[RMDB]
RNA sequence: GGGAACGACUCGAGUAGAGUCGAAAACGGAACGGGAGAGGUCUUUAUUCGCACGCUCGCGGCUUACGAUAUCGCCGCAUUGAUGGAAUAUGGCGGACUCAGCCUUGCCGACGCCUGUGAGCGCGUGACUGCGCUAUGCCUUCGGGCAUAGCGCAGUAAAAGAAACAACAACAACAAC
Reactivity to 2A3 in 0.01 (KOAc 150mM, MgCl2 10mM, bicine 150mM(pH8.5), 24C), signal-to-noise 2, nucleotides 027 to 126: c000g000g000a080a000c010g040g010g040a090g040a010g020g000u010c040u010u220u010a160u050u090c040g020c130a010c040g020c020u050c090g000c060g000g010c000u090u060a120c060g090a190u080a040u300c040g020c020c030g030c000a000u040u200g080a150u140g060g060a110a030u150a120u250g000g000c030g040g040a040c000u040c100a010g050c000c010u020u110g000c040c000g020a050c010g030c000c070u110g040u070g120a020g000c080g000c000g000u030g060
Reactivity to DMS in 0.01 (KOAc 150mM, MgCl2 10mM, bicine 150mM(pH8.5), 24C), signal-to-noise 2, nucleotides 027 to 126: c060g030g030a050a040c020g000g030g000a040g000a060g020g000u010c050u090u010u000a130u020u020c000g100c090a040c030g010c000u010c070g020c000g000g070c050u000u080a180c300g000a100u000a090u030c190g000c000c000g050c010a050u000u010g040a070u010g020g020a060a100u050a050u000g000g020c100g050g040a130c090u010c050a070g000c090c060u020u000g010c030c100g000a040c080g050c000c060u100g000u000g020a000g000c010g020c040g030u000g000
Chemical mapping of a 177-nucleotide RNA with 2A3 and DMS. It was measured as part of the RMDB library OK1LIB. The reactions ran in a buffer of 150 mM KOAc, 10 mM MgCl2 and 150 mM bicine (pH 8.5), at 24 C. For DMS, 1,508 sequencing reads were counted.